RNA sequence: GGGAACGACUCGAGUAGAGUCGAAAAGUGCGGAGUGAAAUUCAUAGUAGCCUUGCCAAUUUGGCGGAACGCCUCGGUACUCCGCGUAGUCGCGACGUAAACGUUCUGUGUUGGCGUUCAGGCCUCAACUCAUACGUAUGUUCGCAUACGUAUGAGUAAAAGAAACAACAACAACAAC
Reactivity to DMS in 0.01 (KOAc 150mM, MgCl2 10mM, bicine 150mM(pH8.5), 24C), signal-to-noise 7, nucleotides 027 to 126: g020u020g020c010g010g010a050g020u000g010a070a060a110u030u020c120a070u020a090g030u030a110g010c040c020u010u030g020c030c050a100a100u020u030u010g030g010c010g010g010a040a040c040g010c040c010u040c120g000g000u020a050c020u000c030c020g010c010g020u010a040g010u010c060g000c050g000a070c060g010u020a060a100a170c070g010u000u020c080u000g020u010g000u020u010g000g000c040g010u000u010c080a080g000g000c030c030u000c120a110
Reactivity to 2A3 in 0.01 (KOAc 150mM, MgCl2 10mM, bicine 150mM(pH8.5), 24C), signal-to-noise 7, nucleotides 027 to 126: g150u120g010c020g000g020a050g010u090g080a040a100a140u220u130c050a070u100a180g070u060a020g020c010c020u060u130g000c020c030a080a160u120u110u240g050g000c010g000g010a020a000c020g000c000c030u030c020g020g020u040a020c000u000c000c000g000c000g000u030a020g020u030c040g000c020g060a040c030g040u070a000a090a050c020g020u070u000c030u030g070u010g050u140u110g020g000c010g020u020u050c020a010g090g000c000c020u080c040a030